The data come from the RNA Mapping Database (RMDB), library OK1LIB.
Structure probing data (DMS and 2A3) for a 177-nucleotide construct.
[RMDB]
RNA sequence: GGGAACGACUCGAGUAGAGUCGAAAAUAGUCAGGGGCUAGAUCAUGUAUAUAUUGCCAUGCAGGCCAUGGUAAGGACUUUGGAUUUUAUUCUGAGUACCAUGGGAAGCCACUGAAAAACCUUGCCAGUCAUGACAUAAUUUCGAUUAUGUCAUGACAAAAGAAACAACAACAACAAC
Reactivity to DMS in 0.01 (KOAc 150mM, MgCl2 10mM, bicine 150mM(pH8.5), 24C), signal-to-noise 3, nucleotides 027 to 126: u030a100g020u000c010a010g000g000g000g020c010u020a050g010a200u030c000a000u000g010u020a150u010a130u030a090u010u000g000c000c000a010u000g000c040a140g010g000c130c010a010u000g010g010u010a020a020g000g000a030c000u000u030u000g010g000a010u010u020u020u030a020u020u000c010u000g020a010g000u000a100c190c000a010u000g000g000g000a160a040g000c010c000a020c010u000g000a000a040a020a100a130c070c040u000u010g050c120c100a190
Reactivity to 2A3 in 0.01 (KOAc 150mM, MgCl2 10mM, bicine 150mM(pH8.5), 24C), signal-to-noise 6, nucleotides 027 to 126: u170a030g080u030c010a010g000g000g000g020c010u060a040g030a260u050c010a010u010g120u050a030u000a020u010a060u250u060g020c010c010a010u020g010c050a080g300g000c100c000a000u000g000g000u030a060a070g070g000a010c000u050u060u170g030g010a040u090u100u030u210a120u250u020c000u000g010a000g000u030a100c040c000a000u000g000g000g020a010a010g000c000c000a020c000u000g010a060a000a000a000a010c010c010u030u080g070c040c010a030
Record summary:
The reactions ran in a buffer of 150 mM KOAc, 10 mM MgCl2 and 150 mM bicine (pH 8.5), at 24 C.